Chemical mapping of a 177-nucleotide RNA with 2A3 and DMS. Source: RMDB libraries RFM100 and RFMREP, as collected in RNAgym. The reactions ran in a buffer of 150 mM KOAc, 10 mM MgCl2 and 150 mM bicine (pH 8.5), at 24 C.
[RMDB]
RNA sequence: GGGAACGACUCGAGUAGAGUCGAAAAUAGGUGCUGCUCAGCCCUUUUGAGUCUGUCAUCGGAAAGACCAUGGCUUUCUCGCUUUUCAUCUUUUUGGAUGGCUGCUUGUCGCAAUAUUGUCUUCUUCUCCACGAACUAUGUUCGCAUAGUUCGUGGAAAAAGAAACAACAACAACAAC
Reactivity to 2A3 in 0.01 (KOAc 150mM, MgCl2 10mM, bicine 150mM(pH8.5), 24C), signal-to-noise 5, nucleotides 027 to 126: u190a030g040g000u080g010c010u010g030c010u050c080a010g020c020c000c000u050u030u040u050g040a020g000u010c050u050g010u010c010a020u030c030g020g040a100a050a020g040a020c020c050a070u080g000g000c000u080u120u060c120u070c080g030c040u090u100u080u100c040a040u030c020u060u110u060u080u100g140g000a040u030g010g030c010u020g000c000u020u060g050u070c050g020c100a050a060u100a100u190u040g030u030c120u010u010c000u010u010c000
Reactivity to DMS in 0.01 (KOAc 150mM, MgCl2 10mM, bicine 150mM(pH8.5), 24C), signal-to-noise 2, nucleotides 027 to 126: u010a010g000g000u020g010c010u010g020c090u040c090a110g000c030c040c000u000u010u000u000g010a070g000u010c080u010g000u000c000a020u000c040g000g000a060a020a040g010a080c100c160a130u000g000g010c010u000u000u000c140u010c210g000c050u010u000u000u030c180a160u000c030u000u000u000u040u000g000g010a040u000g010g030c010u000g000c030u000u020g000u000c050g020c070a030a090u000a120u020u000g000u010c090u000u010c010u010u010c300
Notes: For 2A3 the reverse transcriptase was SuperScript II with manganese.